[RMDB]
Chemical mapping of a 177-nucleotide RNA with DMS and 2A3. The DMS profile rests on 1,791 reads.

RNA sequence: GGGAACGACUCGAGUAGAGUCGAAAACUUCUUGUACUUUCAUUUAGAUGCCUCACUAUGUUCUUUAAUAUUUCUCUUGAAGUUUGGCCUCUGGAGCAGUAAACCAAGGAUGUGAUGGGACUAUUGCUACGUAUACCUCGUUCGCGAGGUAUACGUAAAAAGAAACAACAACAACAAC
Reactivity to DMS in 0.01 (KOAc 150mM, MgCl2 10mM, bicine 150mM(pH8.5), 24C), signal-to-noise 2, nucleotides 027 to 126: c100u000u000c030u000u000g020u010a100c080u000u020u000c070a080u010u000u010a080g010a110u000g000c060c020u000c050a080c070u000a070u000g010u000u000c030u000u010u000a100a110u000a090u000u000u010c030u000c030u000u000g010a050a030g010u000u000u000g010g000c030c000u000c080u000g010g010a060g020c030a040g020u000a010a060a120c120c100a060a100g010g000a050u000g020u000g000a060u000g020g020g000a060c070u000a060u000u000g010c150
Reactivity to 2A3 in 0.01 (KOAc 150mM, MgCl2 10mM, bicine 150mM(pH8.5), 24C), signal-to-noise 1, nucleotides 027 to 126: c000u060u080c010u040u070g030u110a060c010u110u110u020c070a090u080u000u120a050g040a040u120g030c000c010u040c030a040c020u020a090u230g070u070u000c020u000u080u100a190a110u110a130u060u130u000c020u000c000u010u050g040a000a000g000u040u110u100g050g050c000c000u000c010u010g010g010a010g050c090a020g010u050a000a030a100c040c040a020a020g090g010a080u070g000u010g050a060u050g030g000g060a000c030u040a040u130u020g080c030